[RMDB]
RNA sequence: GGGAACGACUCGAGUAGAGUCGAAAAGUUGAUUACAACAUUGCCAAUGAUUAUAACCCAAGAACAGCUCACCUAACUAGCCUGGCACCCUAAAAUCUCUAACAGGUUCAUUAAAAUGGUCCUGUGAAAACAGGGUGAACUUCGGUUCACCCUGUUUAAAAGAAACAACAACAACAAC
Reactivity to DMS in 0.01 (KOAc 150mM, MgCl2 10mM, bicine 150mM(pH8.5), 24C), signal-to-noise 2, nucleotides 027 to 126: g040u020u000g010a160u000u030a060c100a040a060c080a070u000u000g000c090c040a060a050u010g020a100u060u010a070u010a130a100c060c020c000a120a110g000a060a030c110a050g000c030u000c020a070c020c040u000a060a050c050u010a040g000c010c020u050g000g030c020a030c000c000c000u000a000a060a080a090u050c070u010c040u010a130a030c010a000g000g000u020u000c000a040u070u020a040a010a090a050u000g010g000u010c010c000u000g010u000g020a010
Reactivity to 2A3 in 0.01 (KOAc 150mM, MgCl2 10mM, bicine 150mM(pH8.5), 24C), signal-to-noise 3, nucleotides 027 to 126: g020u030u020g030a170u130u140a050c010a060a010c000a030u080u150g060c000c000a080a030u080g050a040u040u160a080u080a190a070c040c000c000a010a030g050a050a030c070a020g000c000u020c030a060c020c010u000a050a040c030u040a010g010c000c000u000g070g020c000a030c020c000c000u050a090a090a030a070u030c060u000c010u050a010a030c000a000g000g060u060u030c000a020u000u280a130a040a040a070u030g020g000u010c000c000u040g000u010g030a000